[RMDB]
RNA sequence: GGGAACGACUCGAGUAGAGUCGAAAAGAAGACUAGUUCGCUAGUCUUCAAAAGAGCUAGCAAUGUUCAGCUAGCAAAGAUCGAAACAUCAAAUGAACAAAAAAACCAUCGACUUCGGUCGAUGGAACCAGUAUUCAUUGUUCGCAAUGAAUACUGGAAAAGAAACAACAACAACAAC
Reactivity to DMS in 0.01 (KOAc 150mM, MgCl2 10mM, bicine 150mM(pH8.5), 24C), signal-to-noise 2, nucleotides 027 to 126: g040a000a000g000a010c000u000a000g010u000u000c210g070c000u010a010g000u000c000u000u000c000a050a040a200a220g010a120g010c010u000a000g010c000a110a090u000g000u000u000c020a050g000c000u000a000g010c000a020a040a050g000a250u000c090g000a050a060a080c220a050u010c120a000a020a060u000g000a010a010c030a010a030a060a060a050a120a140c020c000a000u000c000g010a010c000u010u030c180g050g020u000c000g010a000u000g000g010a020a030
Reactivity to 2A3 in 0.01 (KOAc 150mM, MgCl2 10mM, bicine 150mM(pH8.5), 24C), signal-to-noise 4, nucleotides 027 to 126: g010a000a000g010a000c010u010a010g010u030u040c080g000c070u000a000g000u020c000u000u010c000a000a010a000a000g050a010g000c010u000a000g000c020a080a210u060g010u020u030c010a000g000c000u010a000g000c010a010a070a010g050a030u180c120g080a050a060a060c060a070u180c050a020a040a160u060g010a010a020c000a010a060a030a000a000a020a070c000c000a000u000c010g000a000c000u030u060c290g080g000u010c000g000a000u000g000g000a000a010
Structure probing data (DMS and 2A3) for a 177-nucleotide construct. The DMS profile rests on 1,994 reads. For 2A3 the reverse transcriptase was SuperScript II with manganese. The reactions ran in a buffer of 150 mM KOAc, 10 mM MgCl2 and 150 mM bicine (pH 8.5), at 24 C. Source: RMDB library M2PK50, as collected in RNAgym. In probing experiments dimethyl sulfate is read out at A N1 and C N3, which are open when not base-paired.